[RMDB]
RNA sequence: GGGAACGACUCGAGUAGAGUCGAAAACGCGGAAGACGAACAAGAACAUGGUGCGGUCGCCGCGCAGCGCGAACCGCGCCAGCUGUCGGUCGACGGUGUUGUAGAGGACAUAGCUGCGCUCGUCGCGCCCUACCAACUUAUUCGUAAGUUGGUAGGGAAAAGAAACAACAACAACAAC
Reactivity to DMS in 0.01 (KOAc 150mM, MgCl2 10mM, bicine 150mM(pH8.5), 24C), signal-to-noise 9, nucleotides 027 to 126: c060g020c060g000g010a120a100g010a040c020g000a040a090c160a080a100g020a100a090c110a110u010g020g020u000g010c010g010g010u000c010g020c010c100g000c030g000c020a020g000c020g020c010g010a050a060c010c000g010c000g010c000c010a050g000c030u000g010u000c020g020g010u010c140g010a060c020g000g010u000g000u000u000g020u000a110g010a140g010g000a090c140a080u010a070g020c010u000g000c010g010c010u000c050g010u000c030g000c120g000
Reactivity to 2A3 in 0.01 (KOAc 150mM, MgCl2 10mM, bicine 150mM(pH8.5), 24C), signal-to-noise 7, nucleotides 027 to 126: c040g010c040g070g060a120a060g050a070c030g020a090a040c050a150a070g060a080a030c030a120u060g000g000u020g000c000g000g010u000c010g000c030c020g010c010g000c020a010g000c010g000c000g020a040a040c000c000g010c000g000c000c000a000g000c000u010g000u030c030g070g250u170c150g010a020c010g000g030u060g060u140u240g090u080a100g040a090g110g060a040c050a110u100a020g000c010u010g000c010g000c010u010c010g030u010c010g000c010g050